[RMDB]
RNA sequence: GGGAACGACUCGAGUAGAGUCGAAAAGAUAUGGACGUCCCUGCGGUGCCAGCUCGUAUCGGAAACGAUAUAGAGCGGUAAUACCGUGGGACGUCCUAAGUCAAACUAUCGUGUUCGCACGAUAGAACUUUAGGUCAAGCUUCGGCUUGACCUAAAGAAAAGAAACAACAACAACAAC
Reactivity to DMS in 0.01 (KOAc 150mM, MgCl2 10mM, bicine 150mM(pH8.5), 24C), signal-to-noise 2, nucleotides 027 to 126: g020a010u010a300u000g000g000a000c000g030u010c000c000c000u020g040c020g010g030u010g020c080c060a130g040c000u000c010g020u000a010u000c000g030g010a100a050a190c000g030a000u000a000u000a080g000a000g020c010g030g000u010a100a160u000a080c020c000g010u010g010g000g000a020c000g040u010c000c010u000a040a060g000u030c070a120a120a270c030u000a000u000c000g030u000g010u000u010c230g020c000a030c010g000a020u000a000g000a030a110
Reactivity to 2A3 in 0.01 (KOAc 150mM, MgCl2 10mM, bicine 150mM(pH8.5), 24C), signal-to-noise 1, nucleotides 027 to 126: g050a050u070a040u120g040g020a000c000g010u000c000c030c040u100g040c040g070g000u050g180c100c180a110g010c080u020c010g000u000a020u030c020g000g000a120a080a030c050g000a010u010a000u080a230g000a000g000c000g000g010u010a050a080u190a110c000c000g020u020g010g000g000a000c000g010u000c000c010u000a000a000g020u040c040a010a030a050c000u010a000u020c010g000u000g080u120u060c300g020c140a000c000g000a000u010a010g020a060a040

The record gives the reactivity of an RNA of 177 nucleotides to DMS and 2A3.
The data come from the RNA Mapping Database (RMDB), library TTRDES.
The 2A3 profile rests on 2,615 reads.
DMS adducts were read by reverse transcription with MarathonRT.
For DMS, 1,604 sequencing reads were counted.
The RNA was probed in 150 mM KOAc, 10 mM MgCl2 and 150 mM bicine (pH 8.5) at 24 C.